RNA sequence: GGGAACGACUCGAGUAGAGUCGAAAAGGGCGUCAUUUCGAUGACGCCCAUACGUCUAGUCCGAUUGGCGAGGACGACGCCGACGGGCGCGUUUGCCAAUCGCACCGUCCAGAUUCGUCUGGACGAAGUUCCCACAAAGUUUCGACUUUGUGGGAACAAAAGAAACAACAACAACAAC
Reactivity to 2A3 in 0.01 (KOAc 150mM, MgCl2 10mM, bicine 150mM(pH8.5), 24C), signal-to-noise 3, nucleotides 027 to 126: g000g000g000c010g000u010c000a010u060u120u170c220g060a010u000g010a000c000g000c010c000c000a010u030a000c000g070u000c040u090a040g030u030c030c010g000a040u000u010g010g000c060g030a110g120g070a070c100g030a210c000g000c000c010g150a300c170g050g000g010c010g000c010g000u000u020u090g020c010c000a000a000u000c000g000c020a020c010c020g000u020c000c000a000g000a020u020u090c130g050u010c120u000g000g000a000c000g010a010a010
Reactivity to DMS in 0.01 (KOAc 150mM, MgCl2 10mM, bicine 150mM(pH8.5), 24C), signal-to-noise 3, nucleotides 027 to 126: g010g000g020c000g020u000c000a010u010u010u010c220g010a000u020g000a030c010g020c000c000c000a010u000a000c190g010u010c060u000a070g010u000c160c010g000a030u000u000g000g000c000g020a100g030g000a030c020g020a130c020g010c000c000g010a180c300g010g000g000c000g000c020g020u010u000u000g010c000c020a000a020u000c010g030c210a020c070c030g000u000c000c000a030g000a060u010u010c150g020u000c000u000g000g000a000c000g010a020a060